[RMDB]
RNA sequence: GGGAACGACUCGAGUAGAGUCGAAAAUGGCAUGCGCCAACGGUUUCCUUUGGUUGCUGGUAAAUAGUCAAACUUGAUGGAUAAGGUUCAUGAAUGUUAGAUACUGUGAAUGUCAAUUGCCAUACAUCAGUUAAACCUUCUACAGGUUUCAUGGUACAACUUCCUGAUUGUUCGCAAUCAGGAAGUUAAAAGAAACAACAACAACAAC
Reactivity to 2A3 in 0.01 (KOAc 150mM, MgCl2 10mM, bicine 150mM(pH8.5), 24C), signal-to-noise 1, nucleotides 027 to 156: u060g020g000c060a060u020g020c040g000c000c000a040a000c010g050g000u000u000u060c000c000u000u020u060g060g000u060u090g000c010u000g030g080u100a020a110a140u220a160g060u060c080a040a040a040c020u090u080g030a060u090g030g010a020u080a180a040g070g040u040u070c100a020u100g100a070a100u080g130u090u110a000g010a050u020a080c010u040g010u050g160a070a050u020g020u020c020a020a040u120u100g040c000c000a020u070a150c010a020u110c000a010g000u040u070a040a080a020c020c000u040u010c050u180a090c060a020g020g000u000u000u110c010a000u070g060g000u110a120c030
Reactivity to DMS in 0.01 (KOAc 150mM, MgCl2 10mM, bicine 150mM(pH8.5), 24C), signal-to-noise 1, nucleotides 027 to 156: u030g000g010c020a080u000g000c170g000c010c020a010a080c100g010g000u000u000u000c000c020u010u000u020g000g030u000u000g000c000u010g030g010u020a060a060a150u000a090g040u000c040a050a020a030c040u000u010g000a180u000g010g000a080u000a060a090g070g000u000u000c040a110u010g010a070a080u000g020u020u010a200g000a140u000a050c080u010g020u000g000a050a130u000g040u000c040a100a120u000u010g020c030c020a090u000a070c080a080u000c080a060g000u010u000a010a080a050c000c010u000u010c070u000a120c140a060g010g000u000u000u000c040a070u010g030g010u000a070c070
Conditions: 150 mM KOAc, 10 mM MgCl2 and 150 mM bicine (pH 8.5), 24 C.
Structure probing data (2A3 and DMS) for a 207-nucleotide construct.
The DMS profile rests on 2,881 reads.
For 2A3 the reverse transcriptase was SuperScript II with manganese.